[RMDB]
RNA sequence: GGGAACGACUCGAGUAGAGUCGAAAAUAAAGCGAUACGCAUAAUUUCGGGGGUAAUCCCUUCAAUUUUAAUAUCCAUUUGUAACGCAGUUACCCCUUCACGAGUACCUGCUACUUUAAAGUCCAUGAAUAGAUGCUAACUUCGGUUAGCAUCUAUUAAAAGAAACAACAACAACAAC
Reactivity to 2A3 in 0.01 (KOAc 150mM, MgCl2 10mM, bicine 150mM(pH8.5), 24C), signal-to-noise 1, nucleotides 027 to 126: u090a010a030a010g070c030g040a040u050a080c030g000c030a010u040a120a090u080u110u120c050g020g000g030g030g040u060a090a130u220c000c000c000u030u040c020a000a000u000u050u100u090a100a040u050a060u050c040c000a100u080u030u090g060u030a020a010c060g000c050a000g000u020u010a000c030c000c030c000u030u090c080a070c130g010a050g010u000a020c000c030u020g060c010u020a000c000u030u150u120a090a080a000g050u020c010c020a020u130g040
Reactivity to DMS in 0.01 (KOAc 150mM, MgCl2 10mM, bicine 150mM(pH8.5), 24C), signal-to-noise 3, nucleotides 027 to 126: u010a050a070a070g000c110g010a040u000a030c110g020c150a110u010a050a050u000u000u010c140g010g010g010g010g010u010a160a130u010c030c010c010u010u010c120a010a010u000u000u010u010a090a140u000a040u000c040c050a180u010u010u000g000u010a050a110c130g020c020a040g000u000u000a010c010c010c010c110u000u000c200a070c250g000a040g010u000a010c050c010u000g020c000u000a090c080u000u000u000a060a060a100g000u000c030c020a080u010g010